[RMDB]
This 207-nucleotide RNA was probed chemically with DMS and 2A3. The DMS profile rests on 5,176 reads. For 2A3 the reverse transcriptase was SuperScript II with manganese. For DMS the reverse transcriptase was MarathonRT.
RNA sequence: GGGAACGACUCGAGUAGAGUCGAAAACGAGCUCUUCAGCAUCGACGAGCUCACAGGAGAGAUCCGCACAGUGCAAGUGGGGCUGGACCGCGAGGUGAGGUGGCGCCCCGGCAGCUCCACACCCGCACGGCCAGGGCAGCCCAUCUCCUGCGGGUCAAUAAUAGGGGUGAUUCGUCACCCCUAUUAUAAAAGAAACAACAACAACAAC
Reactivity to DMS in 0.01 (KOAc 150mM, MgCl2 10mM, bicine 150mM(pH8.5), 24C), signal-to-noise 2, nucleotides 027 to 156: c060g000a080g030c000u000c020u000u000c070a240g020c040a110u020c080g000a090c030g010a100g040c010u010c020a040c070a090g010g000a060g000a120g000a060u000c000c020g000c020a100c060a140g030u000g020c020a190a130g000u010g010g000g030g000c040u010g020g000a110c040c050g000c060g010a110g040g020u010g030a080g020g020u000g000g010c040g030c010c000c010c090g000g030c060a030g000c010u000c010c010a050c010a020c040c030c070g000c040a030c010g020g060c050c040a140g000g020g000c050a100g010c030c030c010a120u010c000u010c010c020u010g010c000g020g050g040u000c030a090
Reactivity to 2A3 in 0.01 (KOAc 150mM, MgCl2 10mM, bicine 150mM(pH8.5), 24C), signal-to-noise 2, nucleotides 027 to 156: c050g000a010g000c010u020c000u070u040c090a110g030c110a240u240c170g020a030c020g000a010g000c000u030c010a050c030a010g080g010a050g010a010g010a110u000c010c020g000c010a030c020a080g060u050g060c050a180a090g020u040g030g000g010g040c010u030g040g080a140c010c000g020c080g050a130g000g020u010g020a060g010g050u110g000g060c010g000c010c010c000c010g000g000c000a010g010c020u000c000c020a010c000a020c020c030c010g010c000a020c070g010g010c020c020a030g000g000g020c000a070g010c030c000c000a050u040c010u000c000c000u010g000c010g010g000g000u020c030a020